[RMDB]
RNA sequence: GGGAACGACUCGAGUAGAGUCGAAAAAAAGAUAUGGACCGUGAACUACUCCGUAACAGAUCCAACAGCAGAGCUCGGAAACGAGCUCUGACAUGGAUCUGGAGAAGGAGCACGGUCCUAAGUCAAACCUUAUACCUUUCUUCGGAAAGGUAUAAGGAAAAGAAACAACAACAACAAC
Reactivity to DMS in 0.01 (KOAc 150mM, MgCl2 10mM, bicine 150mM(pH8.5), 24C), signal-to-noise 3, nucleotides 027 to 126: a060a040a070g010a030u000a300u010g020g000a020c000c020g010u000g000a080a060c150u010a300c010u000c000c010g010u000a180a230c020a020g000a010u000c000c010a010a100c300a220g030c000a010g000a010g020c000u000c000g020g000a050a110a190c000g030a010g000c000u000c000u000g000a020c080a220u000g000g000a010u000c000u000g000g010a030g010a150a130g010g010a010g020c000a000c000g010g000u000c000c000u000a010a040g020u000c030a090a110a190
Reactivity to 2A3 in 0.01 (KOAc 150mM, MgCl2 10mM, bicine 150mM(pH8.5), 24C), signal-to-noise 2, nucleotides 027 to 126: a000a010a040g070a040u050a070u120g000g000a000c000c000g010u010g010a060a050c060u280a070c010u300c010c030g010u000a050a020c000a010g000a010u030c010c030a070a120c040a200g120c000a000g010a000g000c010u000c020g030g000a080a040a050c010g000a010g000c020u010c000u000g000a000c000a020u060g000g010a000u030c000u000g000g010a010g010a010a020g000g000a000g010c000a000c000g010g010u000c000c000u010a020a000g010u000c010a050a030a050